Chemical mapping of a 177-nucleotide RNA with DMS and 2A3.
Source: RMDB library OK1LIB, as collected in RNAgym.
The reactions ran in a buffer of 150 mM KOAc, 10 mM MgCl2 and 150 mM bicine (pH 8.5), at 24 C.
[RMDB]
RNA sequence: GGGAACGACUCGAGUAGAGUCGAAAAGAGUAAGGCGGCCACAGCAGAACCGUUCAUGUCGCAGCCGCUGUCAAAUUCUGGUGAAUCUGCGAAUUCUGCUGCAGAGCACGGAAUAGGACCGUGCAAAAGUACUCGGGAUAUUCGUAUCCCGAGUACUAAAAGAAACAACAACAACAAC
Reactivity to DMS in 0.01 (KOAc 150mM, MgCl2 10mM, bicine 150mM(pH8.5), 24C), signal-to-noise 4, nucleotides 027 to 126: g020a110g010u010a090a140g000g010c020g000g020c040c110a120c110a050g000c020a010g000a050a030c150c080g010u030u000c160a090u020g020u020c030g010c090a070g020c210c030g020c000u000g010u000c170a070a100a110u030u040c100u030g000g010u010g020a080a090u040c010u010g000c000g010a090a110u010u010c050u020g000c040u020g000c290a090g010a070g000c000a000c000g010g000a070a160u020a120g030g000a090c000c020g000u000g000c020a050a060a080
Reactivity to 2A3 in 0.01 (KOAc 150mM, MgCl2 10mM, bicine 150mM(pH8.5), 24C), signal-to-noise 5, nucleotides 027 to 126: g100a000g100u150a140a100g020g010c010g000g010c020c020a170c020a040g010c010a010g010a020a040c050c050g070u140u160c120a110u190g030u070c020g000c010a000g000c000c000g000c020u010g000u020c020a070a070a080u170u080c070u120g040g000u050g030a030a080u030c010u010g030c010g010a030a040u050u050c010u070g010c010u020g020c040a030g010a000g110c000a000c020g000g020a110a090u130a250g050g060a020c000c000g000u020g000c000a060a000a000